[RMDB]
RNA sequence: GGGAACGACUCGAGUAGAGUCGAAAAACAUCGGAUAUAUCAGUACAAAGCAUGAGCACCGAUAGCAAAAAUACCCAUGACGAUUCCGAUCAGGGCUCCUUGGACGGCGAUCCGGAUGGACGUGGCGAUGGUGUGUUUAAUUCGUUAAACACACCAUAAAAGAAACAACAACAACAAC
Reactivity to 2A3 in 0.01 (KOAc 150mM, MgCl2 10mM, bicine 150mM(pH8.5), 24C), signal-to-noise 4, nucleotides 027 to 126: a010c020a000u030c020g020g030a030u070a010u020a020u220c030a030g040u130a090c070a100a210a020g060c050a120u070g020a020g050c030a020c040c010g030a020u040a010g040c060a020a060a080a000a050u100a100c030c020c030a050u110g050a020c020g020a040u150u000c040c020g020a020u040c030a030g070g030g000c020u010c030c020u090u110g080g010a030c030g030g020c020g050a060u040c020c010g080g000a050u080g020g010a010c030g020u040g030g070c030g020
Reactivity to DMS in 0.01 (KOAc 150mM, MgCl2 10mM, bicine 150mM(pH8.5), 24C), signal-to-noise 6, nucleotides 027 to 126: a080c090a050u010c020g010g020a080u010a090u000a080u000c030a050g020u010a110c110a080a090a140g000c060a050u010g000a070g000c100a070c030c040g010a050u010a080g020c070a030a040a080a080a100u000a090c040c020c020a090u000g000a060c070g010a130u000u000c030c030g000a070u000c070a090g010g000g000c060u010c040c040u000u000g000g010a080c100g000g020c080g000a070u000c030c030g000g010a070u000g000g000a040c060g020u000g010g020c110g020

Structure probing data (2A3 and DMS) for a 177-nucleotide construct. For 2A3 the reverse transcriptase was SuperScript II with manganese. Conditions: 150 mM KOAc, 10 mM MgCl2 and 150 mM bicine (pH 8.5), 24 C.